[RMDB]
RNA sequence: GGGAACGACUCGAGUAGAGUCGAAAACUGUAAUCCCAGCCACUCGGGAGCCUGAGGCAGGAGAGUCACUGGAACCCAGGAGGCAGAGGUUGCAUUGAGCCAAGAUCGCACCACUGCACUCCAGCCUGGGCGACAGAAAAAGACUCCAUCUCAAAAAAGUAGUAUGUACAUUCGUGUACAUACUACUAAAAGAAACAACAACAACAAC
Reactivity to DMS in 0.01 (KOAc 150mM, MgCl2 10mM, bicine 150mM(pH8.5), 24C), signal-to-noise 1, nucleotides 027 to 156: c050u010g000u000a140a150u010c000c000c000a140g020c030c030a060c040u070c000g060g020g030a150g010c010c010u010g030a040g000g050c000a150g020g010a080g000a110g020u010c010a250c020u000g020g020a180a060c010c060c010a060g000g010a090g030g010c080a040g050a000g000g050u000u000g060c040a080u000u000g000a050g020c050c100a080a300g010a110u000c070g000c060a050c010c010a070c020u020g010c000a070c000u000c020c010a090g000c000c010u000g000g000g010c000g040a300c030a060g000a040a100a150a130a100g000a040c010u000c030c010a100u010c040u020c000a000a080a130a060a130
Reactivity to 2A3 in 0.01 (KOAc 150mM, MgCl2 10mM, bicine 150mM(pH8.5), 24C), signal-to-noise 2, nucleotides 027 to 156: c020u040g070u190a030a080u040c000c020c020a030g050c040c040a110c060u130c120g000g020g040a050g050c030c060u080g010a040g040g010c010a060g050g100a090g010a010g030u030c010a010c050u000g020g000a020a010c000c010c000a000g010g020a020g040g000c010a000g010a030g020g010u090u200g040c020a040u050u110g050a080g100c110c070a150a090g070a060u070c140g010c010a000c000c000a010c000u000g000c030a100c200u040c040c030a050g080c000c020u010g000g000g010c000g010a010c000a000g090a090a180a010a000a000g010a010c000u000c000c020a070u030c030u010c030a070a110a060a020a000
Description
Structure probing data (DMS and 2A3) for a 207-nucleotide construct. The RNA was probed in 150 mM KOAc, 10 mM MgCl2 and 150 mM bicine (pH 8.5) at 24 C. 2A3 adducts were read by reverse transcription with SuperScript II with manganese. For DMS the reverse transcriptase was MarathonRT. Reactivities are rounded to 0.1 and cut off at 0 and 3. For DMS, 1,601 sequencing reads were counted.